RNA sequence: GGGAACGACUCGAGUAGAGUCGAAAACCGCUUCCGACGCACAUAUGUCCAUGGCACGCAGGAAGCGAAUCCGGGACUCUCAACCCCCAUCGGGAGACCCGGAGCCCUGAGCGAACAUCCACGCGGCCUUCUGAGACACAUUCGUGUGUCUCAGAAGAAAAGAAACAACAACAACAAC
Reactivity to DMS in 0.01 (KOAc 150mM, MgCl2 10mM, bicine 150mM(pH8.5), 24C), signal-to-noise 2, nucleotides 027 to 126: c070c020g000c060u000u010c020c000g020a190c150g000c060a110c080a050u040a080u040g000u020c130c160a110u000g000g010c070a170c140g000c120a130g000g020a050a080g040c010g010a100a050u000c000c000g040g010g000a080c020u000c000u000c020a120a190c080c060c010c010c050a110u050c180g000g000g010a000g000a090c020c000c000g000g000a010g010c020c000c050u040g000a070g000c030g000a080a090c030a070u000c030c040a050c080g030c010g010g010c050
Reactivity to 2A3 in 0.01 (KOAc 150mM, MgCl2 10mM, bicine 150mM(pH8.5), 24C), signal-to-noise 6, nucleotides 027 to 126: c040c000g000c000u010u020c000c030g110a170c080g060c040a030c020a090u140a080u200g150u040c080c050a070u070g010g010c080a020c140g000c030a050g000g010a020a000g000c000g000a000a000u000c000c000g010g000g050a090c010u010c000u050c010a120a300c030c000c000c000c000a030u110c060g020g010g010a010g040a080c000c000c000g000g000a000g000c000c000c000u050g090a080g020c010g030a040a020c010a080u010c010c030a040c020g020c010g010g030c010
Source: RMDB library RFM100, as collected in RNAgym. An RNA of 177 nucleotides, treated with DMS and 2A3 and read out base by base. The reactions ran in a buffer of 150 mM KOAc, 10 mM MgCl2 and 150 mM bicine (pH 8.5), at 24 C. For DMS the reverse transcriptase was MarathonRT. For 2A3, 4,830 sequencing reads were counted. 2A3 adducts were read by reverse transcription with SuperScript II with manganese. Reactivities are given for positions 27 through 126. For DMS, 2,596 sequencing reads were counted.